[RMDB]
RNA sequence: GGGAACGACUCGAGUAGAGUCGAAAAAAACUUUUGUGACUUGCUGAAACGGGACUAAUCUCCUCACCGAGGCUAAGCAAGUAAAAUACGCCUCUCAUAUCCUUACCUGAGGGUGGUCAGGAAAUAACCUGCAACGCUUCCUUCGGGAAGCGUUGAACAUUACUAUCCAGUUCGCUGGAUAGUAAUGAAAAGAAACAACAACAACAAC
Reactivity to 2A3 in 0.01 (KOAc 150mM, MgCl2 10mM, bicine 150mM(pH8.5), 24C), signal-to-noise 4, nucleotides 027 to 156: a000a000a000c110u130u090u080u130g090u040g080a050c010u010u020g000c010u050g050a070a070a090c080g030g000g010a000c020u070a100a100u080c060u030c080c020u070c030a060c020c030g010a010g040g000c050u060a030a010g000c000a000a040g040u120a040a030a010a030u090a020c040g000c000c020u020c000u000c030a040u050a080u200c020c000u030u040a080c000c030u030g040a050g020g060g010u050g000g030u020c030a010g000g040a090a050a000u070a050a070c020c050u050g020c010a000a010c000g000c000u000u000c000c000u010u070c090g030g000g000a010a000g000c000g000u000u000g000a000a000
Reactivity to DMS in 0.01 (KOAc 150mM, MgCl2 10mM, bicine 150mM(pH8.5), 24C), signal-to-noise 2, nucleotides 027 to 156: a040a050a060c070u020u000u000u000g030u000g010a080c030u000u000g010c000u020g010a080a070a080c090g020g000g010a070c060u010a080a100u000c030u010c010c000u000c070a150c120c050g030a100g030g020c040u000a120a070g020c020a020a000g030u000a070a060a040a110u000a090c070g030c020c000u030c000u000c020a050u010a120u000c030c040u000u010a090c100c080u000g020a020g020g030g030u020g000g020u010c030a060g000g010a060a060a080u000a100a130c040c030u010g000c010a000a010c010g030c000u000u000c000c000u000u000c300g010g030g020a040a020g020c000g020u000u010g000a030a140